Conditions: 150 mM KOAc, 10 mM MgCl2 and 150 mM bicine (pH 8.5), 24 C. This 177-nucleotide RNA was probed chemically with 2A3 and DMS.
RNA sequence: GGGAACGACUCGAGUAGAGUCGAAAAGAUAUGGAUCCGCGAGAAGAUAUCGGAAACGAUAUUCUUCGAUGAGCCGGAUCCUAAGUCAAAAUCAUAACUUAUGUACUUCGGUACAUAAGUUAUGAAAGGGUAUCAUAUAGUUCGCUAUAUGAUACCCAAAAGAAACAACAACAACAAC
Reactivity to 2A3 in 0.01 (KOAc 150mM, MgCl2 10mM, bicine 150mM(pH8.5), 24C), signal-to-noise 5, nucleotides 027 to 126: g020a020u070a020u120g000g000a000u000c010c010g020c040g040a070g000a080a000g000a010u010a000u000c010g020g030a070a060a030c020g000a010u010a020u180u120c010u000u000c020g010a070u100g040a020g150c150c040g000g000a000u000c000c000u010a120a010g050u020c040a020a030a030a300u040c000a000u010a000a000c000u010u000a000u010g000u010a000c000u030u100c300g110g000u000a010c000a000u010a000a000g000u000u000a000u000g000a020a000a000
Reactivity to DMS in 0.01 (KOAc 150mM, MgCl2 10mM, bicine 150mM(pH8.5), 24C), signal-to-noise 6, nucleotides 027 to 126: g000a040u010a300u000g000g000a010u000c010c000g020c010g030a270g000a010a010g010a030u000a000u000c000g010g000a120a080a200c010g010a010u000a010u010u000c010u000u000c000g010a130u010g000a080g010c250c020g000g000a010u000c000c000u000a020a090g010u000c030a080a090a120a160u000c000a010u000a010a000c000u000u000a000u000g000u000a010c000u000u010c190g020g010u000a000c000a000u000a000a000g010u000u000a000u000g000a010a090a080
For 2A3, 15,716 sequencing reads were counted.